[RMDB]
RNA sequence: GGGAACGACUCGAGUAGAGUCGAAAAGAUAUGGACUUAAUGGAGAAAGACUUCCCUAUAAUCUUAACUCGGAAACGAGUUAAGGUAGGGAAGCUUUCGUUGAAAUUAAGUCCUAAGUCAAAAGGAUAGAUAGCGACUUCGGUCGCUAUCUAUCCAACACAUGUCUAAACUUCGGUUUAGACAUGUGAAAAGAAACAACAACAACAAC
Reactivity to DMS in 0.01 (KOAc 150mM, MgCl2 10mM, bicine 150mM(pH8.5), 24C), signal-to-noise 1, nucleotides 027 to 156: g020a110u010a300u000g020g010a000c000u010u020a000a000u000g010g030a300g000a020a020a010g010a210c020u000u000c010c000c030u000a030u000a300a150u000c010u000u000a010a000c000u000c010g000g020a090a130a300c010g000a010g020u000u000a010a000g030g040u000a000g000g000g000a000a010g000c010u000u000u010c010g020u010u010g000a140a180a080u000u000a020a020g010u000c000c000u010a000a060g020u010c030a050a060a160a180g040g020a000u000a020g010a030u000a010g020c020g020a030c030u020u000c300g090g000u000c020g020c000u000a010u000c000u000a000u010c020c000a060a070
Reactivity to 2A3 in 0.01 (KOAc 150mM, MgCl2 10mM, bicine 150mM(pH8.5), 24C), signal-to-noise 1, nucleotides 027 to 156: g050a010u100a060u120g000g000a000c000u010u020a010a000u010g020g020a050g080a040a030a020g200a300c010u020u050c030c000c000u040a040u050a110a120u050c000u000u000a000a010c000u000c000g030g030a030a070a100c000g010a010g000u010u000a000a000g000g000u000a000g000g000g010a000a000g100c090u120u090u000c000g000u030u010g010a000a020a000u000u010a000a000g000u000c000c000u010a040a000g020u000c010a030a000a100a060g000g000a000u000a020g000a000u020a000g000c040g000a000c020u050u110c300g020g000u000c020g010c000u010a000u010c000u000a000u000c000c000a000a000